An RNA of 207 nucleotides, treated with 2A3 and read out base by base. As a SHAPE reagent, 2A3 marks flexible, mostly unpaired nucleotides at the ribose 2'-OH. For 2A3, 444 sequencing reads were counted. The reactions ran in a buffer of 150 mM KOAc, 10 mM MgCl2 and 150 mM bicine (pH 8.5), at 24 C.
RNA sequence: GGGAACGACUCGAGUAGAGUCGAAAAUCAGAUCGCAGUGUUUAAUAACUAGCUUAAACAGAUGAGACGAUGUAUCCACAUCAAAGAACGUAAAAUACAUAUGACAAACAUUGUUGACAGAAACGUGACCUUCAUUCUUACCGUCGUCCAUAAAUACGCAGGUUAUUCCAUUCGUGGAAUAACCUGCAAAAGAAACAACAACAACAAC
Reactivity to 2A3 in 0.01 (KOAc 150mM, MgCl2 10mM, bicine 150mM(pH8.5), 24C), signal-to-noise 2, nucleotides 027 to 156: u120c050a070g040a120u060c000g000c110a060g020u030g010u000u160u050a180a210u080a090a130c060u050a080g040c040u010u020a000a190a060c010a000g110a260u080g030a080g000a090c000g000a000u000g030u040a070u040c110c100a020c020a080u050c040a000a000a160g000a010a020c070g060u240a080a050a170a000u080a030c070a020u240a070u140g080a090c080a020a130a000c000a070u070u010g010u050u050g020a130c020a020g060a020a030a000c020g000u050g070a050c020c000u040u060c010a100u030u030c000u110u080a010c020c050g050u030c000g050u030c000c070a030u100a100a150a060u200a120c090